RNA sequence: GGGAACGACUCGAGUAGAGUCGAAAAGAUAUGGAUCCUAUACACAGCGAGGAUCUCGGAAACGAGGGAGCUGGUAUGAGGAUCCUAAGUCAAAACGUAGCCAUUGUCUUCGGACAAUGGCUACGAACUCUUAGUGGAAGUUCGCUUCCACUAAGAGAAAAGAAACAACAACAACAAC
Reactivity to DMS in 0.01 (KOAc 150mM, MgCl2 10mM, bicine 150mM(pH8.5), 24C), signal-to-noise 3, nucleotides 027 to 126: g000a050u000a300u010g000g000a000u000c000c010u010a040u000a010c000a100c010a010g010c010g000a070g010g000a030u000c000u010c010g000g000a140a100a220c000g010a020g000g000g000a030g020c010u000g010g020u000a000u010g010a030g000g000a010u000c000c000u000a020a080g000u000c050a060a050a130a160c000g010u000a010g010c000c000a010u000u000g010u000c000u000u000c230g010g000a020c000a000a000u000g010g020c000u000a000c000g000a020a060
Reactivity to 2A3 in 0.01 (KOAc 150mM, MgCl2 10mM, bicine 150mM(pH8.5), 24C), signal-to-noise 3, nucleotides 027 to 126: g030a010u100a040u150g000g000a000u010c010c000u010a000u000a000c300a010c010a070g010c000g080a280g110g000a010u020c000u000c010g000g030a120a050a040c010g000a000g000g000g010a010g000c000u010g040g000u060a030u160g280a020g010g000a000u000c000c010u000a050a000g040u000c030a000a020a100a140c000g000u000a000g000c000c000a010u010u010g010u000c010u080u140c300g010g010a000c000a000a010u030g010g000c020u000a000c000g000a000a000

Description
This 177-nucleotide RNA was probed chemically with DMS and 2A3. The DMS profile rests on 4,273 reads. Conditions: 150 mM KOAc, 10 mM MgCl2 and 150 mM bicine (pH 8.5), 24 C. The 2A3 profile rests on 4,946 reads. DMS adducts were read by reverse transcription with MarathonRT. Values cover nucleotides 27 to 126. Source: RMDB library TTRDEL, as collected in RNAgym.